This 177-nucleotide RNA was probed chemically with 2A3 and DMS. The reactions ran in a buffer of 150 mM KOAc, 10 mM MgCl2 and 150 mM bicine (pH 8.5), at 24 C. For DMS, 1,555 sequencing reads were counted. It was measured as part of the RMDB library RFM100.
[RMDB]
RNA sequence: GGGAACGACUCGAGUAGAGUCGAAAAGGUUGGCCUCAUUAACCAGCGCUAACAAGCCGUGCAAAUGCUCUGAUUGGGCAGCUUUUAUUGGAUAGUACCAGGCCCUUAGCAGGAUACCCACUUAAUGAGGAACCCAUGAAUUCGUUCAUGGGUUCCUAAAAGAAACAACAACAACAAC
Reactivity to 2A3 in 0.01 (KOAc 150mM, MgCl2 10mM, bicine 150mM(pH8.5), 24C), signal-to-noise 3, nucleotides 027 to 126: g110g000u030u030g060g000c000c000u030c010a050u020u020a040a020c010c000a010g030c010g000c050u040a050a020c020a150a020g000c010c000g020u050g030c040a050a070a110u140g000c010u010c050u110g140a200u090u130g020g000g000c010a060g040c030u050u120u020u110a140u130u100g030g010a010u020a070g030u070a090c020c000a010g030g030c000c000c000u090u040a030g040c010a000g080g100a020u080a140c010c000c030a060c020u030u140a080a000u070g040
Reactivity to DMS in 0.01 (KOAc 150mM, MgCl2 10mM, bicine 150mM(pH8.5), 24C), signal-to-noise 2, nucleotides 027 to 126: g020g000u000u030g010g000c030c000u010c090a050u020u020a060a170c020c030a000g000c070g020c000u050a020a050c220a090a180g000c000c080g000u010g070c090a060a050a090u010g020c000u010c050u000g000a150u030u060g010g000g000c000a030g000c020u000u000u050u010a050u020u070g000g010a230u020a070g000u000a130c000c020a130g020g030c010c030c100u000u000a030g000c080a100g000g000a060u000a110c000c110c060a130c110u000u070a050a090u000g000